[RMDB]
RNA sequence: GGGAACGACUCGAGUAGAGUCGAAAACCUGGCUCGAAAUCGUCGACGCAUCGACGACGGUCCUGCCAUGAGACCGUAACGAGGACAUGUCGCCUCGAAUGGCGUCGGGGAGGCGGCAGCUUACCCCAAAACGACCGCAGCUUCGGCUGCGGUCGAAGGUAUGCUUAGAGUUCGCUCUAAGCAUACCAAAAGAAACAACAACAACAAC
Reactivity to 2A3 in 0.01 (KOAc 150mM, MgCl2 10mM, bicine 150mM(pH8.5), 24C), signal-to-noise 1, nucleotides 027 to 156: c000c000u000g020g040c110u020c110g140a100a150a140u020c010g010u000c000g020a050c020g070c280a190u110c000g000a010c000g000a000c000g000g040u000c020c020u050g060c000c000a050u110g020a010g000a070c010c010g010u100a020a010c010g010a040g000g020a020c040a100u300g040u140c080g030c000c000u010c010g030a010a020u020g020g040c020g000u130c120g010g000g000g000a000g010g020c000g130g040c030a010g000c080u070u140a270c000c000c020c040a000a190a000a000c020g010a000c000c060g000c010a000g000c000u020u160c150g090g000c010u010g000c000g000g000u000c000g000a000a000

An RNA of 207 nucleotides, treated with 2A3 and read out base by base. Reactivities are given for positions 27 through 156. The reactions ran in a buffer of 150 mM KOAc, 10 mM MgCl2 and 150 mM bicine (pH 8.5), at 24 C. The data come from the RNA Mapping Database (RMDB), library M2RFPK.